[RMDB]
An RNA of 207 nucleotides, treated with DMS and 2A3 and read out base by base.
For DMS the reverse transcriptase was MarathonRT.
The DMS profile rests on 3,641 reads.
The RNA was probed in 150 mM KOAc, 10 mM MgCl2 and 150 mM bicine (pH 8.5) at 24 C.
RNA sequence: GGGAACGACUCGAGUAGAGUCGAAAAAGUUCGCGCUUCCGUGAAACGCGAAAAUCGGACGGUGGCUGCAGGUCGCAUCGCAAAACCGCGGCAAGUGGAGUUAGCGAGAGGAGGCUGGGUUUUGGCUAGAACACACGGUACUUCGGUACCGUGUGAACAUUUGUAACCCUUUCGAGGGUUACAAAUGAAAAGAAACAACAACAACAAC
Reactivity to DMS in 0.01 (KOAc 150mM, MgCl2 10mM, bicine 150mM(pH8.5), 24C), signal-to-noise 2, nucleotides 027 to 156: a090g000u000u000c020g030c020g000c000u000u000c040c190g010u000g010a030a030a010c000g020c000g000a060a000a090a110u000c040g040g010a080c070g010g030u000g020g000c030u000g010c030a110g010g010u020c000g040c050a120u000c060g040c080a090a080a080a100c040c040g010c030g010g040c060a060a100g020u000g010g010a170g030u000u000a130g010c040g010a090g000a120g000g020a070g030g030c020u000g020g020g000u000u000u000u000g010g000c050u020a100g000a120a210c010a010c000a020c000g000g000u020a000c000u000u010c230g050g010u000a000c000c000g000u000g000u010g000a060a070
Reactivity to 2A3 in 0.01 (KOAc 150mM, MgCl2 10mM, bicine 150mM(pH8.5), 24C), signal-to-noise 2, nucleotides 027 to 156: a000g100u050u020c020g020c000g010c070u090u050c040c090g160u080g110a060a050a030c000g000c000g060a030a000a010a050u140c070g020g030a010c000g040g040u040g000g020c070u100g000c030a050g000g010u030c020g000c060a070u020c040g010c050a050a060a070a000c020c030g040c000g080g020c130a160a080g000u080g070g010a100g020u060u100a030g060c020g030a020g010a020g050g020a020g030g000c040u020g040g030g000u000u020u020u050g000g000c020u030a060g080a180a010c000a000c000a000c020g020g000u020a000c000u010u070c150g060g000u000a000c020c000g000u000g000u010g000a000a000